Overview
Chemical mapping of a 170-nucleotide RNA with DMS and 2A3. For 2A3 the reverse transcriptase was SuperScript II with manganese. For 2A3, 6,049 sequencing reads were counted. DMS (dimethyl sulfate) methylates the pairing face of unpaired adenines and cytosines.
[RMDB]
RNA sequence: GGGAACGACUCGAGUAGAGUCGAAAAGGGCAUCAUUUAGACUCCUAUUUUGUCGUUAAGAGGCAUACUAUGGAGAAUUAUGAACUAGAGAAGCACUGUUACGACUUGUUACGUGACUGUGAUGCUGAACCUGGAGCGUUCGCGCUCCAGAAAAGAAACAACAACAACAAC
Reactivity to DMS in 0.01 (KOAc 150mM, MgCl2 10mM, bicine 150mM(pH8.5), 24C), signal-to-noise 5, nucleotides 027 to 129: g020g040g050c050a060u010c020a080u010u020u030a060g020a190c000u000c000c020u030a060u030u010u000u020g000u010c050g040u050u000a160a110g060a220g040g040c020a000u020a080c150u020a070u040g000g000a020g000a110a090u020u010a060u050g020a060a120c110u020a080g090a170g020a150a060g060c040a080c040u050g000u010u010a030c030g010a170c100u070u030g000u000u000a100c070g030u010g000a010c020u020g030u010g000a030u020g020c020u020g010a090a090c080
Reactivity to 2A3 in 0.01 (KOAc 150mM, MgCl2 10mM, bicine 150mM(pH8.5), 24C), signal-to-noise 5, nucleotides 027 to 129: g070g000g000c010a030u000c010a040u040u070u090a110g020a050c000u000c010c000u030a040u040u050u040u060g060u000c050g030u080u070a230a030g130a170g110g020c010a000u030a080c060u100a030u160g000g000a020g010a000a040u140u110a060u100g040a020a040c040u060a040g000a000g030a160a000g030c030a000c020u040g000u000u000a000c000g090a060c090u100u110g100u100u190a040c000g000u000g000a000c010u030g040u030g040a130u040g000c020u010g030a010a020c000